An RNA of 207 nucleotides, treated with 2A3 and read out base by base. For 2A3 the reverse transcriptase was SuperScript II with manganese. Reactivities are rounded to 0.1 and cut off at 0 and 3. Reactivities are given for positions 27 through 156.
RNA sequence: GGGAACGACUCGAGUAGAGUCGAAAAAAUCAAGUAGCAAAGCUUUAAUACUACUUGCGGGCGUAUGGUGGGCUUCAUCAAUUAUGAUCAGGUCCGCAUUAUUAACAAUAUCUCUAAGCUCAUCAUGUUUAUUGCGCUUUUUCUGAGAGUAAUAAUAGUAUUGGAACGUGUUCGCACGUUCCAAUACAAAAGAAACAACAACAACAAC
Reactivity to 2A3 in 0.01 (KOAc 150mM, MgCl2 10mM, bicine 150mM(pH8.5), 24C), signal-to-noise 1, nucleotides 027 to 156: a000a000u170c030a040a000g000u010a010g020c100a100a010a000g060c090u300u160u300a170a030u220a100c000u010a000c000u000u060g000c060g000g000g070c040g020u130a140u140g000g030u000g010g000g030c030u070u020c000a000u010c030a130a150u250u160a090u300g090a030u040c010a040g090g030u010c000c010g000c010a000u050u130a090u070u000a050a070c040a080a020u000a060u070c000u000c020u070a100a000g000c010u000c000a040u030c000a060u110g040u040u150u060a130u100u100g000c030g020c000u050u100u000u110u030c060u170g030a030g030a030g030u100a010a040u020a130a030u040a100